The record gives the reactivity of an RNA of 177 nucleotides to DMS and 2A3. Reactivities are given for positions 27 through 126. The 2A3 profile rests on 7,429 reads.

RNA sequence: GGGAACGACUCGAGUAGAGUCGAAAACUGUGCCAGCACCAAUAAGCAUUCGCAGAGAAUUGAUCUCCGGUGGCAGCACAAAGAAACUCACGGCAUCAAUCCUCCCAGAUCGCGGGGCAGUAUUGCACAGUAUACUGACCUUCGGGUCAGUAUACUGAAAAGAAACAACAACAACAAC
Reactivity to DMS in 0.01 (KOAc 150mM, MgCl2 10mM, bicine 150mM(pH8.5), 24C), signal-to-noise 4, nucleotides 027 to 126: c070u020g000u010g000c070c000a120g010c050a100c030c040a130a080u010a100a110g010c060a040u000u010c050g000c240a190g000a110g010a020a080u000u030g010a110u020c030u000c030c070g020g010u000g010g000c040a150g000c080a040c100a050a080a180g010a090a100a020c090u010c030a010c050g000g000c300a060u000c050a100a050u010c040c010u010c030c030c070a100g000a070u030c040g000c060g010g000g020g010c040a030g000u010a040u050u010g000c090a190
Reactivity to 2A3 in 0.01 (KOAc 150mM, MgCl2 10mM, bicine 150mM(pH8.5), 24C), signal-to-noise 8, nucleotides 027 to 126: c040u020g010u040g040c010c030a050g020c030a020c030c020a050a150u170a210a050g060c040a060u080u090c060g020c100a020g040a010g040a240a070u160u140g070a110u090c030u040c080c080g040g000u010g030g030c020a030g020c010a010c020a020a140a010g090a050a050a000c020u000c000a030c020g050g000c010a050u030c030a040a120u020c010c010u050c000c000c000a040g020a110u100c050g010c050g060g010g030g000c020a010g030u080a070u120u170g020c050a010